Record summary
An RNA of 207 nucleotides, treated with 2A3 and DMS and read out base by base. The reactions ran in a buffer of 150 mM KOAc, 10 mM MgCl2 and 150 mM bicine (pH 8.5), at 24 C. It was measured as part of the RMDB library M2RFPK.
RNA sequence: GGGAACGACUCGAGUAGAGUCGAAAAGCAACGCAAAGCCGCGGCAAGUGGAGUUAGCGAGAAGAGACUAGGCUUUGGUUUCUUCAAGUGAAGCGGUCACCAAUCACGUGUGGUAGUUACCGUAAAAAUAACCGCUCUUUGUUCGCAAAGAGCGGAAGGUUCAGAUAUUCUUCGGAAUAUCUGAACCAAAAGAAACAACAACAACAAC
Reactivity to 2A3 in 0.01 (KOAc 150mM, MgCl2 10mM, bicine 150mM(pH8.5), 24C), signal-to-noise 5, nucleotides 027 to 156: g020c030a030a040c060g020c070a060a040a040g030c020c000g020c020g050g040c060a090a050g040u070g050g080a150g040u170u130a040g040c040g050a060g000a050a010g020a000g000a020c020u040a070g040g130c030u100u120u110g000g010u020u010u000c000u020u010c010a040a030g040u060g100a070a010g010c020g010g000u020c000a010c020c010a060a080u180c020a050c140g160u210g020u040g120g030u040a090g030u070u070a010c010c020g020u060a030a070a080a030a010u100a060a080c000c000g020c000u000c000u010u000u030g030u050u060c120g000c110a000a000a000g000a000g000c000g000g000a010a000
Reactivity to DMS in 0.01 (KOAc 150mM, MgCl2 10mM, bicine 150mM(pH8.5), 24C), signal-to-noise 2, nucleotides 027 to 156: g010c040a070a040c010g020c020a050a110a120g000c030c010g030c030g010g000c040a050a080g030u000g000g010a130g000u000u000a300g020c030g000a300g010a070a050g000a040g000a020c020u000a070g030g000c170u010u030u000g050g010u000u000u000c030u000u000c000a070a300g010u000g000a100a230g030c020g000g000u000c040a060c000c000a050a120u000c070a040c080g010u000g010u000g000g020u000a090g020u010u000a070c000c030g010u000a000a040a020a070a090u010a120a150c010c000g010c000u000c000u020u000u000g000u000u000c200g040c000a000a020a020g000a020g010c000g010g000a020a000